[RMDB]
RNA sequence: GGGAACGACUCGAGUAGAGUCGAAAAGAUAUGGAGAUAGUAGCUUUUGACGCCUGAAAUGUCGGAAACGACAUAUAAGGGCGAUAAGCUAUCAUCUCCUAAGUCAAAAGCCAGCUUCGGCUGGCAACCUAUCAAGUAGGUUCGCCUACUUGAUAGGAAAAGAAACAACAACAACAAC
Reactivity to DMS in 0.01 (KOAc 150mM, MgCl2 10mM, bicine 150mM(pH8.5), 24C), signal-to-noise 6, nucleotides 027 to 126: g010a040u010a300u000g000g010a020g010a010u000a030g010u000a000g010c000u000u000u010u000g030a190c080g000c000c000u010g000a120a140a040u000g010u000c000g010g000a100a050a180c010g010a010c000a010u000a030u010a120a300g000g010g020c000g020a060u000a010a010g010c000u000a010u000c060a010u000c000u000c000c000u010a020a040g000u010c030a090a100a120a180g010c000c000a010g010c010u000u020c200g010g000c000u000g000g020c010a020a030
Reactivity to 2A3 in 0.01 (KOAc 150mM, MgCl2 10mM, bicine 150mM(pH8.5), 24C), signal-to-noise 6, nucleotides 027 to 126: g020a010u060a030u120g000g000a020g000a000u030a060g020u010a010g000c010u120u170u140u300g280a210c140g010c000c010u010g000a120a080a030u010g000u000c010g000g020a060a070a030c010g010a000c020a010u050a010u010a030a030g010g000g000c000g010a020u050a020a010g000c000u020a000u060c010a010u000c000u000c000c000u020a070a020g030u000c020a030a000a060a230g010c010c010a000g000c000u090u190c300g180g000c020u010g000g010c000a010a010